Chemical mapping of a 177-nucleotide RNA with DMS and 2A3.
For DMS, 882 sequencing reads were counted.
Conditions: 150 mM KOAc, 10 mM MgCl2 and 150 mM bicine (pH 8.5), 24 C.
Values cover nucleotides 27 to 126.
Source: RMDB library OK1LIB, as collected in RNAgym.
RNA sequence: GGGAACGACUCGAGUAGAGUCGAAAAACGGCAAUUCUCUGACGCAGUUUGCACGAGGGCUUCACAUGAACAGAAGGCAUGUGAUGACGAUAAAUACCUGCGCAAGCAUAUCAACAAUCGCCAUUAAGAGGCAUAUGCGAUUCGUCGCAUAUGCCUCAAAAGAAACAACAACAACAAC
Reactivity to DMS in 0.01 (KOAc 150mM, MgCl2 10mM, bicine 150mM(pH8.5), 24C), signal-to-noise 1, nucleotides 027 to 126: a040c110g000g030c090a120a000u000u000c020u000c080u020g000a230c130g000c070a130g030u000u000u000g000c030a040c150g010a100g010g100g000c000u030u000c000a000c000a000u010g000a020a040c280a180g030a070a130g000g040c010a000u000g020u000g010a060u000g000a090c040g000a120u090a070a050a040u030a070c070c000u000g040c090g030c070a000a050g000c120a130u050a090u050c070a040a050c270a000a120u040c000g000c050c000a250u030u000a060a150
Reactivity to 2A3 in 0.01 (KOAc 150mM, MgCl2 10mM, bicine 150mM(pH8.5), 24C), signal-to-noise 2, nucleotides 027 to 126: a010c010g070g000c000a000a020u090u000c050u000c000u020g070a050c110g020c080a040g000u010u040u120g090c050a050c040g190a050g000g100g070c030u000u000c000a000c000a030u020g140a300a080c070a110g120a230a060g130g000c020a000u010g030u000g020a010u000g040a000c020g060a030u150a090a090a000u110a090c000c000u000g010c000g020c000a010a000g020c020a080u090a030u210c070a020a040c000a030a030u020c010g040c030c000a060u040u110a160a020
For DMS the reverse transcriptase was MarathonRT.